[RMDB]
RNA sequence: GGGAACGACUCGAGUAGAGUCGAAAAUCAAUGAGAUGCUGGGCGCUAUGGUCGUCCUCCUCCGGCUGACCUCCUUCUCAGCUGCUGACCGGCGCCGCACAGGCGGCAUCUCAGCUUCGUGUGCAAAAAAAGAAUGGUCGGUUCGCCGACCAUUCAACCACAGAUUAAGGUUCGCCUUAAUCUGUGGAAAAGAAACAACAACAACAAC
Reactivity to 2A3 in 0.01 (KOAc 150mM, MgCl2 10mM, bicine 150mM(pH8.5), 24C), signal-to-noise 2, nucleotides 027 to 156: u100c060a000a120u040g000a000g000a000u010g000c000u060g010g000g030c050g000c000u070a150u300g060g000u050c060g050u070c010c050u060c010c020u030c040c010g010g000c000u000g000a020c000c060u150c070c040u300u100c050u000c020a020g000c020u040g010c080u110g010a010c010c010g010g000c000g000c020c020g020c030a040c020a020g180g010c000g010g000c000a000u000c000u010c000a010g000c000u150u160c060g110u060g000u070g090c090a080a110a050a000a000a000a020g000a000a020u000g000g000u000c010g050g000u030u080c210g010c080c000g000a000c000c000a000u000u010c000a000a000
Reactivity to DMS in 0.01 (KOAc 150mM, MgCl2 10mM, bicine 150mM(pH8.5), 24C), signal-to-noise 2, nucleotides 027 to 156: u010c070a130a060u000g010a020g030a020u010g000c020u000g010g020g030c020g040c010u000a040u000g020g000u000c000g000u000c040c020u000c030c030u010c070c000g020g020c020u010g020a030c030c070u000c130c080u000u000c050u000c010a040g010c010u010g010c050u020g000a020c000c020g010g030c030g030c010c010g000c110a090c110a110g000g040c020g000g000c000a020u000c020u000c000a040g010c070u000u000c050g020u020g000u000g000c020a010a000a090a110a140a180a230g020a050a010u000g020g030u000c010g010g010u000u010c300g040c010c010g000a020c000c010a000u000u000c010a070a150
An RNA of 207 nucleotides, treated with 2A3 and DMS and read out base by base. The 2A3 profile rests on 1,713 reads. 2A3 adducts were read by reverse transcription with SuperScript II with manganese.